About this RNA:
Chemical mapping of a 177-nucleotide RNA with DMS and 2A3.
RNA sequence: GGGAACGACUCGAGUAGAGUCGAAAAGAUAUGGAAGGCUAUGAAGGUGAUGGCGAUGAAAUCGGAAACGAUGGAGCCACCACUGGAGCCUUCCUAAGUCAAACCGUGUGACUUCGGUCACACGGAACUAAGAGCAUAUCUUCGGAUAUGCUCUUAGAAAAGAAACAACAACAACAAC
Reactivity to DMS in 0.01 (KOAc 150mM, MgCl2 10mM, bicine 150mM(pH8.5), 24C), signal-to-noise 6, nucleotides 027 to 126: g000a040u000a300u000g000g000a020a010g010g010c010u000a190u020g000a160a140g010g000u000g010a010u000g000g010c000g010a100u010g000a040a100a010u000c010g010g010a130a080a180c000g010a010u000g000g000a100g010c000c000a000c010c000a000c010u000g000g000a020g000c000c010u010u000c000c000u000a010a070g000u000c030a080a110a190c010c000g010u000g010u000g000a010c000u000u010c260g020g000u000c000a010c000a000c010g010g000a010a060
Reactivity to 2A3 in 0.01 (KOAc 150mM, MgCl2 10mM, bicine 150mM(pH8.5), 24C), signal-to-noise 5, nucleotides 027 to 126: g020a020u050a050u130g000g000a000a000g000g000c020u070a190u300g030a030a010g010g010u010g000a030u010g010g000c040g160a300u040g000a050a030a000u010c010g000g030a050a040a030c010g000a000u010g020g010a000g000c000c000a010c000c010a000c000u000g000g010a000g000c000c000u000u000c010c000u000a010a000g020u010c030a010a040a110c000c010g000u000g000u000g010a010c000u020u090c300g140g000u000c010a000c000a010c000g000g000a000a000
The RNA was probed in 150 mM KOAc, 10 mM MgCl2 and 150 mM bicine (pH 8.5) at 24 C. DMS (dimethyl sulfate) methylates the pairing face of unpaired adenines and cytosines. The 2A3 profile rests on 16,334 reads.